Description
Chemical mapping of a 177-nucleotide RNA with 2A3 and DMS. For 2A3 the reverse transcriptase was SuperScript II with manganese. Source: RMDB library OK2TST, as collected in RNAgym. Values cover nucleotides 27 to 126. The reactions ran in a buffer of 150 mM KOAc, 10 mM MgCl2 and 150 mM bicine (pH 8.5), at 24 C. As a SHAPE reagent, 2A3 marks flexible, mostly unpaired nucleotides at the ribose 2'-OH. For DMS the reverse transcriptase was MarathonRT.

[RMDB]
RNA sequence: GGGAACGACUCGAGUAGAGUCGAAAAAGGUGAGGCCCAAGCCUGAGCCAGCAGCUCCUGAUGUGCCUAAGAAGAAGCCGCGCGGCGUGCUGGCAAAGAGGUUACAGGCCGAGGCCCAGGCCCGCGCGGCAGGGGUAUUGUUCGCAAUACCCCUGCCAAAAGAAACAACAACAACAAC
Reactivity to 2A3 in 0.01 (KOAc 150mM, MgCl2 10mM, bicine 150mM(pH8.5), 24C), signal-to-noise 3, nucleotides 027 to 126: a000g050g020u050g030a060g010g010c000c000c010a030a010g020c010c010u010g000a010g030c010c000a000g000c010a010g020c010u100c050c010u300g100a300u100g150u190g010c020c020u130a180a170g090a120a010g080a040a010g120c020c010g000c000g000c020g020g000c060g010u060g020c000u000g000g010c030a030a090a000g110a010g010g010u080u070a050c010a060g040g000c010c000g010a020g040g020c000c010c000a010g000g090c050c000c000g000c020g030c080
Reactivity to DMS in 0.01 (KOAc 150mM, MgCl2 10mM, bicine 150mM(pH8.5), 24C), signal-to-noise 5, nucleotides 027 to 126: a100g010g000u000g000a290g000g000c020c010c030a200a220g010c010c010u000g010a220g010c010c010a040g020c050a150g000c010u000c020c030u020g020a080u010g010u000g010c030c030u000a090a120g020a110a120g000a140a180g010c010c010g010c020g010c300g000g010c070g020u000g050c010u000g010g010c020a020a060a120g010a090g000g010u000u010a110c200a140g010g010c000c010g000a150g000g000c020c010c020a080g020g010c020c000c010g010c110g020c100